An RNA of 177 nucleotides, treated with 2A3 and DMS and read out base by base. The reactions ran in a buffer of 150 mM KOAc, 10 mM MgCl2 and 150 mM bicine (pH 8.5), at 24 C. 2A3 adducts were read by reverse transcription with SuperScript II with manganese. The DMS profile rests on 39,921 reads.
RNA sequence: GGGAACGACUCGAGUAGAGUCGAAAAGUAUAGCCUGAGUGACCUCUAGGAGUCCUUGGACCUGAGCUAACUCCUGUACAAUUUUGGCCGGUUGUCUGGUUAAUAAAUUAACAAUUGGUAAUGAUAACAGGGAUGAGUACUUCGGUACUCAUUCUUGAAAAGAAACAACAACAACAAC
Reactivity to 2A3 in 0.01 (KOAc 150mM, MgCl2 10mM, bicine 150mM(pH8.5), 24C), signal-to-noise 5, nucleotides 027 to 126: g050u060a040u090a120g040c020c050u020g030a040g030u070g050a060c010c010u040c070u130a070g040g050a070g070u020c030c000u060u130g070g020a020c010c000u030g030a000g000c000u020a030a040c000u010c010c010u000g030u050a040c030a080a110u060u050u040u190g070g010c000c000g010g000u050u060g040u030c080u040g040g000u010u010a060a030u110a090a140a030u090u090a050a010c020a040a070u060u020g020g040u130a100a120u150g140a110u060a170a040
Reactivity to DMS in 0.01 (KOAc 150mM, MgCl2 10mM, bicine 150mM(pH8.5), 24C), signal-to-noise 9, nucleotides 027 to 126: g010u010a050u010a060g010c130c090u020g010a070g010u010g000a120c300c030u000c030u030a040g000g000a090g000u010c040c040u010u020g020g010a070c040c020u000g010a080g000c040u020a150a060c040u010c020c010u000g000u010a040c080a070a110u010u010u020u020g010g000c010c040g010g000u000u010g000u010c100u010g010g010u010u010a050a070u030a070a070a070u010u010a030a030c050a060a090u010u010g010g010u000a060a070u020g000a090u020a060a190